[RMDB]
RNA sequence: GGGAACGACUCGAGUAGAGUCGAAAAGCCGGGAGUGGUUACGGUGGUCGUGGGUGUCGUUGCCAUUAGAUGAACGUUAGACUAUGGAAAAUCUUUGAUAGUUUAUCAAAGUUAUUGGGCGACCGAGCUAUAUUUAAUUUUUCGAAAUUAAAUAUAGAAAAGAAACAACAACAACAAC
Reactivity to DMS in 0.01 (KOAc 150mM, MgCl2 10mM, bicine 150mM(pH8.5), 24C), signal-to-noise 5, nucleotides 027 to 126: g000c020c020g000g000g010a060g010u010g000g010u010u010a050c050g010g010u030g000g010u000c030g020u020g000g000g020u010g010u010c030g010u000u010g010c020c010a110u030u030a070g010a100u020g000a080a100c110g000u010u010a030g010a070c040u010a050u010g000g000a070a060a160a080u030c060u000u000u020g010a020u000a050g000u010u020u010a020u010c000a020a040a070g000u010u020a040u020u010g000g000g010c020g010a070c030c040g010a100g020
Reactivity to 2A3 in 0.01 (KOAc 150mM, MgCl2 10mM, bicine 150mM(pH8.5), 24C), signal-to-noise 4, nucleotides 027 to 126: g040c030c020g000g020g000a090g060u100g030g020u080u050a020c040g000g090u060g010g020u030c040g030u040g020g020g010u060g040u020c020g010u000u030g020c010c000a060u060u100a040g080a140u130g050a080a000c030g010u010u040a020g020a050c040u050a060u070g060g000a060a040a040a120u060c010u010u000u020g030a010u020a080g140u120u170u120a010u010c010a030a000a000g000u000u040a110u120u100g020g000g000c030g010a000c020c040g020a010g030

The record gives the reactivity of an RNA of 177 nucleotides to DMS and 2A3. For 2A3 the reverse transcriptase was SuperScript II with manganese. For 2A3, 2,686 sequencing reads were counted. The DMS profile rests on 12,612 reads.